[RMDB]
RNA sequence: GGGAACGACUCGAGUAGAGUCGAAAAUGUUCAUGUCAGUGUACUUUAUGUGUGGCCCAAGACAAUUCUUCUAUUUCCAUUGUGGCCCAGGGAAGCCAAAAGAUUGGACGUCCCUGCUUUAUUUAAAGCAAAGCAGGAAUGUUACAGGCUGGCACAAAAUUUACGAGUGAUUCGUCACUCGUAAAUUAAAAGAAACAACAACAACAAC
Reactivity to DMS in 0.01 (KOAc 150mM, MgCl2 10mM, bicine 150mM(pH8.5), 24C), signal-to-noise 2, nucleotides 027 to 156: u010g010u000u000c040a080u000g010u010c060a080g030u000g010u010a060c050u010u000u010a100u010g000u010g040u000g040g030c020c030c030a060a040g000a120c070a050a070u010u000c060u010u010c050u010a090u000u030u000c020c010a250u000u000g030u000g050g020c050c060c020a150g010g030g010a050a080g020c020c040a060a080a040a090g010a170u010u000g000g010a020c020g000u000c000c010c000u010g020c000u010u000u000a050u000u020u010a100a090a250g010c180a040a020a010g000c010a010g000g010a010a010u010g000u000u000a110c060a050g020g020c010u000g000g000c010a040c040a030a110
Reactivity to 2A3 in 0.01 (KOAc 150mM, MgCl2 10mM, bicine 150mM(pH8.5), 24C), signal-to-noise 3, nucleotides 027 to 156: u120g020u030u080c070a050u080g030u020c020a020g030u020g020u250a060c030u080u090u110a200u200g130u010g070u130g030g000c030c030c000a010a000g080a050c070a090a120u150u010c020u130u010c040u160a190u040u090u020c060c050a090u060u060g070u160g100g000c030c000c000a010g030g010g050a040a010g010c000c020a050a110a020a050g060a240u120u130g020g010a010c010g030u010c000c000c010u000g030c000u000u050u030a160u040u170u210a080a020a010g070c010a010a000a000g010c010a000g010g000a040a010u040g000u010u030a040c010a000g070g000c010u060g030g000c050a020c010a040a190

Description
This 207-nucleotide RNA was probed chemically with DMS and 2A3. DMS adducts were read by reverse transcription with MarathonRT. Source: RMDB library OK3TST, as collected in RNAgym.